[RMDB]
RNA sequence: GGGAACGACUCGAGUAGAGUCGAAAAUCGAUUAUGUAGUACUCCUAAUAUCCGGUAGAUAGCGUAUUUGUCUGCAAAACAUUCUUCUGUAGUGGACUCUGGUAAUAACUCCUAUCGAUCUAUAAACAAAAAGCCAUUUGUUUAAGCCAUUAAGGGGAGAGUCUUGACAAUUCGUUGUCAAGACUCUAAAAGAAACAACAACAACAAC
Reactivity to 2A3 in 0.01 (KOAc 150mM, MgCl2 10mM, bicine 150mM(pH8.5), 24C), signal-to-noise 2, nucleotides 027 to 156: u080c010g020a050u140u050a140u300g140u080a080g040u020a040c010u020c000c000u080a110a020u120a080u130c050c010g030g000u010a020g020a090u050a080g100c120g040u070a210u090u040u090g070u050c030u030g000c000a050a070a110a060c000a070u060u050c020u010u060c010u110g120u120a050g050u050g090g000a030c030u020c080u140g030g000u010a060a070u020a040a070c040u000c010c000u040a020u060c010g000a040u010c020u090a080u070a080a050a000c010a000a020a000a040a000g080c030c010a010u010u040u000g000u010u010u010a030a000g000c010c010a050u080u060a100a060g020g000g030g000